RNA sequence: GGGAACGACUCGAGUAGAGUCGAAAAAAGCAAGUACUGUUACAUGCACUGGAAAUUGCUGAGCCAGGCACCUGCCCUCUCACAGAUGAAGGUGCUGAAGUUCCCAGGGGUGGCUGGGGCGGGAGCCGAUAGACUAUCUUUUCGAAGAUAGUCUAUCAAAAGAAACAACAACAACAAC
Reactivity to DMS in 0.01 (KOAc 150mM, MgCl2 10mM, bicine 150mM(pH8.5), 24C), signal-to-noise 7, nucleotides 027 to 126: a070a050g010c030a070a100g020u000a120c110u010g010u010u000a110c100a100u000g020c040a040c040u000g000g000a080a100a060u000u000g020c160u000g000a060g010c150c150a160g010g020c010a070c130c080u020g010c050c020c040u010c030u000c070a080c100a060g010a040u000g000a300a070g000g000u000g010c000u000g010a100a120g000u000u000c010c000c000a230g010g000g000g010u010g000g000c140u000g000g000g010g000c130g000g000g010a060g020c140c070
Reactivity to 2A3 in 0.01 (KOAc 150mM, MgCl2 10mM, bicine 150mM(pH8.5), 24C), signal-to-noise 6, nucleotides 027 to 126: a000a010g080c080a070a020g040u110a110c050u060g080u200u090a070c050a090u220g040c030a010c030u030g030g010a050a130a090u050u030g020c060u020g040a010g050c080c070a040g010g000c010a080c030c090u150g020c030c010c000u030c000u000c010a080c030a040g060a030u130g030a050a000g000g010u010g000c000u000g010a020a010g020u010u010c000c000c020a000g070g020g000g070u300g010g030c190u110g030g000g030g110c210g010g020g000a020g080c050c040
An RNA of 177 nucleotides, treated with DMS and 2A3 and read out base by base. The data come from the RNA Mapping Database (RMDB), library OK2TRN. Reactivities are given for positions 27 through 126. For DMS, 8,545 sequencing reads were counted.